[RMDB]
RNA sequence: GGGAACGACUCGAGUAGAGUCGAAAAGAUAUGGAUGCCUCUGGGACUGCAUCGAUCUCGGAAACGAGGGAGCAGCCCAGAGGGCAUCCUAAGUCAAAAGAGUAUGCAACUUCGGUUGCAUACUCAAGUAGAGGAUACACUUCGGUGUAUCCUCUACAAAAGAAACAACAACAACAAC
Reactivity to DMS in 0.01 (KOAc 150mM, MgCl2 10mM, bicine 150mM(pH8.5), 24C), signal-to-noise 2, nucleotides 027 to 126: g000a080u000a300u000g000g020a000u000g010c000c000u000c000u000g000g000g010a170c010u000g010c000a300u000c180g000a060u010c000u000c000g010g000a160a090a280c000g010a030g020g000g030a030g020c010a000g000c000c000c010a000g000a010g000g000g010c000a010u000c000c000u010a020a060g020u020c060a110a080a110a130g010a010g010u010a030u000g010c010a000a010c010u000u020c180g030g010u000u000g010c010a000u000a000c000u010c000a000a040
Reactivity to 2A3 in 0.01 (KOAc 150mM, MgCl2 10mM, bicine 150mM(pH8.5), 24C), signal-to-noise 3, nucleotides 027 to 126: g030a040u070a030u200g000g000a000u000g010c000c010u000c010u030g030g040g300a300c000u020g000c030a270u300c130g050a180u010c020u000c010g050g000a120a170a110c000g000a000g000g000g010a020g000c000a000g040c000c000c000a000g000a000g000g010g020c000a000u000c000c000u000a020a010g050u030c020a030a020a110a030g020a000g020u010a010u010g020c010a000a020c030u080u090c300g120g000u000u000g010c000a010u010a000c010u000c000a000a000